[RMDB]
RNA sequence: GGGAACGACUCGAGUAGAGUCGAAAAUACCUUCCAUUCAACAGUCCGCAGCACUUGCAUUGGGAAGGCUUGCCAAUUACAAUGAAGAACUUGCGGAAAGUGUCGUGUCCGGUGACAUACUCGCGCACAUACCGCAUCCAUUCGUGGAUGCGGUAUGAAAAGAAACAACAACAACAAC
Reactivity to DMS in 0.01 (KOAc 150mM, MgCl2 10mM, bicine 150mM(pH8.5), 24C), signal-to-noise 3, nucleotides 027 to 126: u060a120c070c030u010u000c020c030a090u030u040c160a120a130c120a090g000u010c000c010g010c020a040g020c140a100c060u000u010g000c010a030u000u000g000g000g000a100a070g030g000c020u030u000g000c020c020a030a030u010u040a110c070a070a020u000g000a070a050g000a050a130c100u020u010g020c050g050g000a030a030a080g010u000g000u000c020g030u030g020u000c030c030g020g020u020g000a090c040a070u000a060c110u020c030g020c090g000c100a150
Reactivity to 2A3 in 0.01 (KOAc 150mM, MgCl2 10mM, bicine 150mM(pH8.5), 24C), signal-to-noise 6, nucleotides 027 to 126: u130a040c010c000u010u060c020c020a050u060u110c040a070a070c010a080g070u000c010c020g010c030a040g010c020a030c080u010u130g060c030a010u000u030g060g000g040a060a040g030g020c020u060u160g030c000c000a030a050u040u040a050c000a030a040u120g030a040a060g050a100a080c050u090u070g000c010g010g000a030a040a060g090u060g020u050c020g000u020g030u060c040c060g090g040u080g020a030c020a020u090a040c020u020c050g030c000g020c020a020